[RMDB]
RNA sequence: GGGAACGACUCGAGUAGAGUCGAAAAUUUUCUUCUGAUGCGUCAGAUGGGGUGUGGGCACUCUGGGUCUCUUCCCCUGGGGCUUCAGUGUUCUUGCUGCCCCAGCAUGGUUGAGUUGGGCCAGGUUUACUUUAUCUGAGUCAAGGGGCCAUGAGGAUCCACAGUUAUUUUUCGAAAUAACUGUGGAAAAAGAAACAACAACAACAAC
Reactivity to 2A3 in 0.01 (KOAc 150mM, MgCl2 10mM, bicine 150mM(pH8.5), 24C), signal-to-noise 2, nucleotides 027 to 156: u050u080u030u050c010u060u000c000u040g040a070u040g080c110g080u050c010a010g020a080u060g030g030g010g040u040g020u090g030g020g010c050a010c070u030c040u100g040g000g070u040c010u050c030u020u040c000c000c000c000u020g020g000g000g030c000u150u090c010a040g030u010g050u210u190c060u040u090g040c010u050g000c000c000c000c000a020g000c020a030u070g050g000u010u050g000a120g070u070u020g030g120g080c000c000a010g000g020u040u090u040a090c020u100u130u100a030u070c010u020g020a030g050u000c020a020a040g070g000g010g000c030c000a050u080g040a020g100g070a030
Reactivity to DMS in 0.01 (KOAc 150mM, MgCl2 10mM, bicine 150mM(pH8.5), 24C), signal-to-noise 1, nucleotides 027 to 156: u000u000u010u000c020u000u000c030u010g010a090u010g030c100g020u000c070a060g020a040u000g000g010g010g010u000g000u010g010g010g010c070a060c040u000c050u000g020g020g000u000c020u000c060u000u010c030c010c040c040u000g000g020g120g020c020u010u000c030a070g030u010g020u000u010c030u000u010g030c050u000g030c010c010c010c000a040g000c040a050u010g020g010u000u000g010a100g060u020u000g010g000g030c020c010a030g010g030u020u000u000a070c110u010u000u000a040u020c030u010g010a120g010u000c020a060a080g020g000g030g010c000c010a020u000g010a130g000g010a260

The data come from the RNA Mapping Database (RMDB), library OK3TST. Chemical mapping of a 207-nucleotide RNA with 2A3 and DMS. As a SHAPE reagent, 2A3 marks flexible, mostly unpaired nucleotides at the ribose 2'-OH. For 2A3, 809 sequencing reads were counted. The reactions ran in a buffer of 150 mM KOAc, 10 mM MgCl2 and 150 mM bicine (pH 8.5), at 24 C.